[RMDB]
About this RNA: The record gives the reactivity of an RNA of 170 nucleotides to 2A3 and DMS. It was measured as part of the RMDB library 15KLIB. Values are in units of 0.01, from 0 to 300, in steps of 10. In probing experiments dimethyl sulfate is read out at A N1 and C N3, which are open when not base-paired. The reactions ran in a buffer of 150 mM KOAc, 10 mM MgCl2 and 150 mM bicine (pH 8.5), at 24 C. For 2A3, 13,737 sequencing reads were counted.
RNA sequence: GGGAACGACUCGAGUAGAGUCGAAAAGGGAUAGGAGUAAGACCAUAGCGAUGGGGGGAGAUGCUAGGAGUUGGGGGAGACCGAAGCGAGGAGGAAAGCAAAGAAAGCAACGGGGCUAGCCGUCAGGAAAGCUAGCUGUUCGCAGCUAGCAAAAGAAACAACAACAACAAC
Reactivity to 2A3 in 0.01 (KOAc 150mM, MgCl2 10mM, bicine 150mM(pH8.5), 24C), signal-to-noise 4, nucleotides 027 to 129: g100g010g020a060u130a030g010g030a040g030u060a060a020g030a080c000c020a120u120a020g090c070g070a060u110g000g010g000g000g020g010a010g000a000u100g000c020u040a030g020g010a060g020u090u090g020g000g000g010g000a010g010a000c010c020g020a020a010g010c020g000a020g000g000a000g010g010a020a040a000g000c030a000a000a080g040a040a080a000g010c010a030a040c060g000g000g000g000c000u020a030g020c010c010g040u040c020a020g090g000a060a040a020
Reactivity to DMS in 0.01 (KOAc 150mM, MgCl2 10mM, bicine 150mM(pH8.5), 24C), signal-to-noise 5, nucleotides 027 to 129: g050g020g010a000u040a030g020g010a010g060u050a080a090g020a140c060c080a120u040a100g030c120g050a090u000g040g000g000g060g030g030a000g030a040u050g040c070u000a100g000g000a000g010u060u030g030g050g030g010g030a070g050a050c050c050g010a060a030g040c170g030a030g010g010a050g020g020a020a020a010g000c240a020a020a050g000a060a080a070g050c070a040a110c100g030g010g010g040c000u020a070g020c000c000g040u030c130a080g040g050a060a070a060